[RMDB]
Chemical mapping of a 177-nucleotide RNA with DMS and 2A3. The DMS profile rests on 1,807 reads. Reactivities are given for positions 27 through 126. For 2A3, 3,628 sequencing reads were counted. Values are in units of 0.01, from 0 to 300, in steps of 10.

RNA sequence: GGGAACGACUCGAGUAGAGUCGAAAAGAUAUGGAACUUACUAGGGAGAGGUUGUCGGAAACGACAAUACCUCGAAGAACUAGGAGUUCCUAAGUCAAACUAUGCAAAACUUCGGUUUUGCAUAGAACCCUUAAGAUCACUUCGGUGAUCUUAAGGGAAAAGAAACAACAACAACAAC
Reactivity to DMS in 0.01 (KOAc 150mM, MgCl2 10mM, bicine 150mM(pH8.5), 24C), signal-to-noise 2, nucleotides 027 to 126: g000a030u010a210u000g000g000a000a010c000u000u000a100c020u000a010g010g000g000a190g000a000g000g000u010u000g000u000c000g050g000a030a020a070c010g010a020c000a030a030u000a030c010c000u000c000g010a050a160g010a210a300c000u000a010g010g000a010g010u000u010c000c000u000a000a090g000u000c040a160a180a280c010u000a000u000g000c000a000a000a000a010c000u000u020c240g020g010u000u000u000u000g000c000a010u000a000g000a080a120
Reactivity to 2A3 in 0.01 (KOAc 150mM, MgCl2 10mM, bicine 150mM(pH8.5), 24C), signal-to-noise 2, nucleotides 027 to 126: g000a020u040a020u070g000g000a020a000c010u040u300a300c010u030a010g080g080g020a230g030a000g030g000u000u000g000u000c010g010g020a050a030a030c000g040a000c010a020a050u200a090c020c000u010c000g020a070a020g070a000a010c000u000a000g020g010a010g010u000u000c000c000u010a040a000g000u000c020a030a070a180c010u010a000u020g010c000a000a000a000a000c000u080u090c110g020g010u000u010u020u030g000c000a000u000a000g000a020a030